[RMDB]
RNA sequence: GGGAACGACUCGAGUAGAGUCGAAAAACAUGCUGGCCAACCCAACCCCACGAUCCUCCAUCGGCAUGAUCAUGAUGUGUUCUCAAAUAUCAGGCCAGUAAAUCACCAUGCUCGUGCUGGUACAGGCAACUUAUGCCCAAGUUCGCUUGGGCAUAAACUAGAUAGAAAACUUCGGUUUUCUAUCUAGAAAAGAAACAACAACAACAAC
Reactivity to 2A3 in 0.01 (KOAc 150mM, MgCl2 10mM, bicine 150mM(pH8.5), 24C), signal-to-noise 3, nucleotides 027 to 156: a000c040a020u040g010c000u000g000g000c010c000a030a050c070c020c050a030a060c010c020c020c000a050c040g050a100u070c000c030u020c040c020a020u030c010g000g000c020a020u010g000a010u010c010a010u010g040a040u080g010u000g050u110u040c050u020c050a080a090a020u210a120u130c080a050g000g020c000c010a000g000u020a010a030a060u110c010a010c050c000a000u020g010c010u000c000g010u000g000c000u020g000g000u020a040c040a060g000g020c010a030a040c060u030u000a000u020g000c000c000c000a000a000g010u030u070c130g030c120u000u000g010g000g000c000a000u000a000a000a000
Reactivity to DMS in 0.01 (KOAc 150mM, MgCl2 10mM, bicine 150mM(pH8.5), 24C), signal-to-noise 2, nucleotides 027 to 156: a070c020a100u000g030c000u000g020g010c040c020a150a170c060c010c050a070a140c060c010c010c030a120c090g010a140u020c020c030u020c080c040a040u000c040g000g000c010a030u000g000a040u010c020a030u000g020a080u000g020u010g030u000u000c060u010c040a080a060a140u020a120u010c090a150g040g000c000c000a040g020u010a030a070a090u000c000a020c000c000a000u000g010c100u020c030g010u010g020c000u000g000g000u000a070c030a070g020g030c110a060a070c110u000u000a040u000g000c000c000c000a000a040g000u000u000c250g030c020u000u000g000g030g000c000a010u010a010a020a220

An RNA of 207 nucleotides, treated with 2A3 and DMS and read out base by base. Reactivities are given for positions 27 through 156. The RNA was probed in 150 mM KOAc, 10 mM MgCl2 and 150 mM bicine (pH 8.5) at 24 C. The DMS profile rests on 3,651 reads. Values are in units of 0.01, from 0 to 300, in steps of 10. For 2A3 the reverse transcriptase was SuperScript II with manganese.